[RMDB]
Chemical mapping of a 177-nucleotide RNA with 2A3.
RNA sequence: GGGAACGACUCGAGUAGAGUCGAAAAGGCCAGGAUUCUCGCCACGGCUUGGGUCGCAUCGAACGCUUCGGCCACGGUGGCCACCUUAUGCCGCGGCCAGCCGAGGCUUGACGUCGGGCACCAGCCGAGAAGAGCGGCUGUUCGCAGCCGCUCUUCUAAAAGAAACAACAACAACAAC
Reactivity to 2A3 in 0.01 (KOAc 150mM, MgCl2 10mM, bicine 150mM(pH8.5), 24C), signal-to-noise 1, nucleotides 027 to 126: g140g000c000c000a010g010g060a020u160u030c030u080c090g000c010c040a020c040g000g040c000u100u290g010g080g020u100c000g000c040a130u120c040g140a160a060c050g050c070u150u220c030g030g000c000c000a030c090g130g150u170g010g000c030c000a010c000c010u120u200a060u210g050c040c010g020c000g010g020c000c000a020g190c020c020g000a030g000g060c000u050u140g000a000c060g010u050c000g010g000g010c000a010c040c000a010g000c000c000g000
The reactions ran in a buffer of 150 mM KOAc, 10 mM MgCl2 and 150 mM bicine (pH 8.5), at 24 C. For 2A3 the reverse transcriptase was SuperScript II with manganese.